[RMDB]
RNA sequence: GGGAACGACUCGAGUAGAGUCGAAAAUACAUGUGUACACCUAUACGGUGUAUACACCAUUAUGAUGUAUAACACCUAUGAUACUUACUCGACUGGAUUUUUAAUUCUUGUCCAUACAUCCAUGAUAACUCUGUUAACAAUAUCCCAGACAAGAUCACUCCUUAAGAGAGUUCGCUCUCUUAAGGAGAAAAGAAACAACAACAACAAC
Reactivity to DMS in 0.01 (KOAc 150mM, MgCl2 10mM, bicine 150mM(pH8.5), 24C), signal-to-noise 2, nucleotides 027 to 156: u010a050c080a060u000g010u000g030u030a010c030a020c020c010u000a080u000a140c150g070g080u010g010u000a000u010a010c000a020c040c050a170u020u010a090u000g000a010u020g000u000a030u000a080a100c030a040c040c000u010a030u000g020a210u000a080c040u000u000a030c040u000c020g010a170c050u000g000g000a050u010u000u070u000u000a050a140u010u000c020u000u000g000u000c010c060a100u000a030c040a090u010c010c050a050u000g010a120u000a040a070c050u000c000u000g010u000u000a070a120c060a060a080u000a100u010c020c000c000a160g010a060c020a040a070g000a270u010c080a300
Reactivity to 2A3 in 0.01 (KOAc 150mM, MgCl2 10mM, bicine 150mM(pH8.5), 24C), signal-to-noise 9, nucleotides 027 to 156: u090a000c020a030u060g010u000g000u010a000c000a020c010c010u120a130u110a300c160g010g000u000g000u000a000u000a010c000a000c010c010a020u130u120a100u270g070a030u030g050u020a030u020a130a040c040a070c030c030u050a090u160g070a050u060a090c040u090u040a050c020u070c050g050a030c060u040g040g030a070u080u060u050u060u300a120a120u130u020c020u030u040g010u000c020c010a020u020a100c020a020u000c040c010a030u070g030a080u120a090a050c030u040c050u230g050u130u070a060a010c010a050a060u050a060u130c010c010c000a010g030a030c020a030a010g060a020u150c120a010
Record summary: An RNA of 207 nucleotides, treated with DMS and 2A3 and read out base by base. Values are in units of 0.01, from 0 to 300, in steps of 10. For 2A3 the reverse transcriptase was SuperScript II with manganese. The RNA was probed in 150 mM KOAc, 10 mM MgCl2 and 150 mM bicine (pH 8.5) at 24 C. The data come from the RNA Mapping Database (RMDB), library OK3TST. Values cover nucleotides 27 to 156.